Chemical mapping of a 177-nucleotide RNA with 2A3 and DMS. The 2A3 profile rests on 5,892 reads.
RNA sequence: GGGAACGACUCGAGUAGAGUCGAAAAGAUAUUCCAAUUGUUAGACUACAUUUCAAAACAACCAGUAUUAGUGAAGUCUUCGAUCGUGCGCUCUUCCUCUGCACGAAUAUUCCAAUCUAGAGGAAAAGUCAUUUAUCAGUUUCGACUGAUAAAUGACAAAAGAAACAACAACAACAAC
Reactivity to 2A3 in 0.01 (KOAc 150mM, MgCl2 10mM, bicine 150mM(pH8.5), 24C), signal-to-noise 4, nucleotides 027 to 126: g060a020u100a130u100u050c040c000a040a060u120u070g070u090u050a020g010a020c020u040a040c090a070u090u120u150c120a090a090a080a100c050a090a110c090c050a050g050u080a130u160u110a020g020u050g050a040a010g000u000c000u010u020c030g050a050u020c010g000u000g000c030g020c030u060c040u070u000c000c000u020c000u020g000c010a010c020g000a030a010u100a060u090u040c020c000a010a030u030c060u090a010g010a020g000g000a010a020a000a060
Reactivity to DMS in 0.01 (KOAc 150mM, MgCl2 10mM, bicine 150mM(pH8.5), 24C), signal-to-noise 4, nucleotides 027 to 126: g000a110u020a080u000u000c070c070a100a100u000u000g000u010u000a090g020a040c080u000a120c080a060u000u000u010c130a050a040a050a050c090a080a080c240c160a100g000u000a090u000u000a070g010u000g020a130a040g000u000c010u000u000c080g000a050u000c020g020u000g010c010g010c070u000c090u010u000c000c000u000c010u000g010c020a030c030g000a020a060u000a020u010u000c030c060a060a080u010c110u020a020g000a030g010g000a010a020a100a180
Values cover nucleotides 27 to 126.